RNA sequence: GGGAACGACUCGAGUAGAGUCGAAAAGCGCCACUUUGAUUGCUCUGGCCGUGGGCAAGGAGAAGAUGGGACAGGAUGCGUUGAACCUUGUGCAGCUGCUCGGCAACAUCCAACAGAACAUUGUCGACAGUUGAUGAGAAUUCGUUCUCAUCAACUGAAAAGAAACAACAACAACAAC
Reactivity to DMS in 0.01 (KOAc 150mM, MgCl2 10mM, bicine 150mM(pH8.5), 24C), signal-to-noise 7, nucleotides 027 to 126: g020c080g020c020c040a090c080u000u000u010g010a280u000u000g010c020u010c030u010g010g000c050c060g030u010g000g010g010c040a030a060g000g000a140g010a040a050g010a090u000g020g010g010a080c070a090g000g010a110u000g020c080g010u000u000g000a070a100c050c030u000u000g020u010g020c060a080g000c040u000g010c040u000c040g000g010c030a030a050c090a090u000c050c050a050a100c160a110g000a050a070c130a130u000u000g000u000c030g000a170
Reactivity to 2A3 in 0.01 (KOAc 150mM, MgCl2 10mM, bicine 150mM(pH8.5), 24C), signal-to-noise 5, nucleotides 027 to 126: g040c050g040c000c000a040c030u060u070u110g100a120u090u070g020c010u010c010u060g110g000c020c050g040u090g010g030g000c040a040a030g090g050a070g030a030a040g060a080u090g020g010g010a020c010a020g120g000a050u050g040c050g030u030u080g020a030a040c020c000u040u070g040u040g050c020a040g020c030u060g010c010u020c010g000g000c010a010a010c000a050u050c030c010a040a040c030a070g090a060a030c030a110u050u080g050u050c010g030a050
The record gives the reactivity of an RNA of 177 nucleotides to DMS and 2A3. The DMS profile rests on 8,993 reads. DMS adducts were read by reverse transcription with MarathonRT. Conditions: 150 mM KOAc, 10 mM MgCl2 and 150 mM bicine (pH 8.5), 24 C.